Chemical mapping of a 177-nucleotide RNA with DMS and 2A3. It was measured as part of the RMDB library OK2TRN.
[RMDB]
RNA sequence: GGGAACGACUCGAGUAGAGUCGAAAACAAGACCAGCCUGGGCAAUAUGGUGAAACCCCAUCUCUACAAAACACCAAAAUUACCCAGGUGUGGUGGUGCGCACCUGUAGUCCCAGCUACUUGGGAGGGCUGGGACGAUAUUUCGAUAUCGUCCCAGCAAAAGAAACAACAACAACAAC
Reactivity to DMS in 0.01 (KOAc 150mM, MgCl2 10mM, bicine 150mM(pH8.5), 24C), signal-to-noise 3, nucleotides 027 to 126: c060a090a070g010a060c010c010a200g000c010c010u000g010g000g010c010a010a010u000a120u010g000g010u000g000a090a070a020c010c010c000c000a130u010c120u020c190u000a090c160a040a030a020a020c000a020c010c020a010a050a090a090u010u000a040c020c000c000a020g000g020u000g030u000g000g020u010g010g020u000g020c090g000c090a130c000c000u000g020u000a090g000u000c000c000c000a080g010c080u020a050c100u010u020g020g010g020a110g000g010
Reactivity to 2A3 in 0.01 (KOAc 150mM, MgCl2 10mM, bicine 150mM(pH8.5), 24C), signal-to-noise 2, nucleotides 027 to 126: c030a050a050g070a090c000c000a010g050c000c000u000g000g000g010c000a000a020u030a050u020g010g000u000g040a100a010a000c030c020c020c000a180u080c110u020c040u230a110c050a070a110a020a000c010a000c010c000a060a050a060a100u010u020a030c000c000c010a000g000g010u010g040u010g000g030u040g040g060u160g000c100g000c000a080c070c000u030g050u090a050g060u000c010c010c010a000g010c020u080a090c030u080u070g030g050g000a080g030g110